RNA sequence: GGGAACGACUCGAGUAGAGUCGAAAACAGGCCCUGAUCCACGGCGAGGCGGUCGUUGACGACACCGUGCUGUUCGAUGGCGAUGUGGCCGGGGUGUGCAUCGAGCCGACGCUGACCCUGCCAGGCCACGUAAGGGGAGGUUCGCCUCCCCUUACGUAAAAGAAACAACAACAACAAC
Reactivity to DMS in 0.01 (KOAc 150mM, MgCl2 10mM, bicine 150mM(pH8.5), 24C), signal-to-noise 4, nucleotides 027 to 126: c120a120g010g010c020c010c040u000g020a110u010c070c080a070c100g050g000c020g010a120g000g020c030g000g000u010c050g040u040u010g010a110c080g000a070c040a080c010c010g040u000g000c040u010g010u020u020c110g020a090u010g010g020c030g010a120u010g000u020g030g030c040c020g000g000g000g010u030g000u040g020c030a050u000c040g000a100g030c120c050g010a030c100g020c040u010g010a070c080c000c010u020g000c060c050a090g000g000c010c030
Reactivity to 2A3 in 0.01 (KOAc 150mM, MgCl2 10mM, bicine 150mM(pH8.5), 24C), signal-to-noise 5, nucleotides 027 to 126: c080a000g060g010c010c000c000u020g030a060u040c010c010a030c050g000g010c050g040a080g090g040c050g030g020u060c070g030u030u120g100a080c090g010a000c010a010c030c010g060u080g120c040u030g060u060u060c040g080a160u060g050g050c020g040a110u140g050u130g120g000c030c050g000g000g000g000u150g000u130g010c050a030u040c020g050a050g100c040c080g050a040c020g020c030u070g100a110c000c010c000u000g010c020c030a030g050g000c010c010